[RMDB]
RNA sequence: GGGAACGACUCGAGUAGAGUCGAAAAGAUAUGGACCUUUGUAGACAUGCUGGUCGGUCGGAAACGACCGCUACAGCAACAGCUACAUGGGUCCUAAGUCAAAUCCUACUUGUUCGCAAGUAGGAAAGUAAAUGUUGUACUUCGGUACAACAUUUACAAAAGAAACAACAACAACAAC
Reactivity to DMS in 0.01 (KOAc 150mM, MgCl2 10mM, bicine 150mM(pH8.5), 24C), signal-to-noise 3, nucleotides 027 to 126: g020a010u000a060u010g010g010a010c000c000u000u000u000g010u000a010g000a020c110a280u000g010c000u000g010g010u000c010g010g010u010c010g020g000a010a010a020c000g020a010c010c010g010c120u010a090c000a010g030c000a100a060c300a140g000c000u000a000c000a000u000g000g010g010u000c000c000u000a000a050g000u000c010a170a130a180u010c000c000u000a010c000u000u000g010u010u020c240g010c000a010a010g000u000a000g020g000a010a010a060
Reactivity to 2A3 in 0.01 (KOAc 150mM, MgCl2 10mM, bicine 150mM(pH8.5), 24C), signal-to-noise 3, nucleotides 027 to 126: g000a000u030a010u030g020g000a000c000c000u030u010u000g010u000a030g020a050c180a300u300g000c010u010g000g040u040c000g000g000u010c000g000g000a010a010a000c000g000a000c000c010g010c020u280a160c010a010g000c020a060a070c110a090g000c010u000a000c000a010u020g000g000g030u000c000c000u010a000a000g010u000c020a070a010a150u000c000c000u000a000c000u030u030g060u130u130c300g030c200a010a010g000u000a010g000g000a070a010a000
Structure probing data (DMS and 2A3) for a 177-nucleotide construct.
The RNA was probed in 150 mM KOAc, 10 mM MgCl2 and 150 mM bicine (pH 8.5) at 24 C.
2A3 adducts were read by reverse transcription with SuperScript II with manganese.
Values cover nucleotides 27 to 126.
The 2A3 profile rests on 10,445 reads.
The DMS profile rests on 4,775 reads.
For DMS the reverse transcriptase was MarathonRT.